The record gives the reactivity of an RNA of 207 nucleotides to 2A3 and DMS. Source: RMDB library M2RFPK, as collected in RNAgym. The reactions ran in a buffer of 150 mM KOAc, 10 mM MgCl2 and 150 mM bicine (pH 8.5), at 24 C. In probing experiments dimethyl sulfate is read out at A N1 and C N3, which are open when not base-paired. For DMS, 3,103 sequencing reads were counted.

RNA sequence: GGGAACGACUCGAGUAGAGUCGAAAAGUGCCAGAGAAGUUGUAUAUUGGGCUACCAUCCAGUGAUGCAAUGGAGCCUUAUUAGGGUUGUCAGUUUUCCACAGGGUAGCAAUUAAAACUGUCUGAAAAAAACGAAACCACCUUCGGGUGGUUUCGAAUCAUACUUAUCUGUUCGCAGAUAAGUAUGAAAAAGAAACAACAACAACAAC
Reactivity to 2A3 in 0.01 (KOAc 150mM, MgCl2 10mM, bicine 150mM(pH8.5), 24C), signal-to-noise 1, nucleotides 027 to 156: g020u000g070c000c000a000g020a060g010a230a000g030u120u080g090u040a130u040a040u170u140g000g050g030c030u080a150c000c020a010u050c010c050a080g120u090g160a080u090g030c030a000a060u030g000g050a010g030c020c000u080u030a130u070u090a030g050g000g060u000u000g000u000c000a000g010u000u000u140u140c040c010a090c000a020g020g000g120u090a000g070c060a090a050u140u140a050a000a000a000c000u000g000u000c000u000g040a120a080a020a020a000a000a000c030g010a000a030a020c000c000a030c020c020u070u010c200g120g000g000u010g000g000u000u000u000c000g000a000a000
Reactivity to DMS in 0.01 (KOAc 150mM, MgCl2 10mM, bicine 150mM(pH8.5), 24C), signal-to-noise 2, nucleotides 027 to 156: g020u000g030c010c040a080g010a140g010a110a090g020u000u000g040u020a040u000a120u000u010g020g010g030c010u000a080c040c010a080u000c030c010a090g000u010g030a180u000g000c050a090a060u010g010g010a090g010c040c010u000u000a040u020u010a140g010g000g040u000u000g000u020c000a080g010u000u000u000u000c020c040a150c030a210g030g010g030u000a020g000c020a060a110u000u000a020a060a070a020c010u000g010u000c010u010g010a000a000a050a080a080a080a260c010g020a020a030a020c000c000a000c000c010u000u010c300g070g030g000u010g000g010u000u000u000c000g000a040a060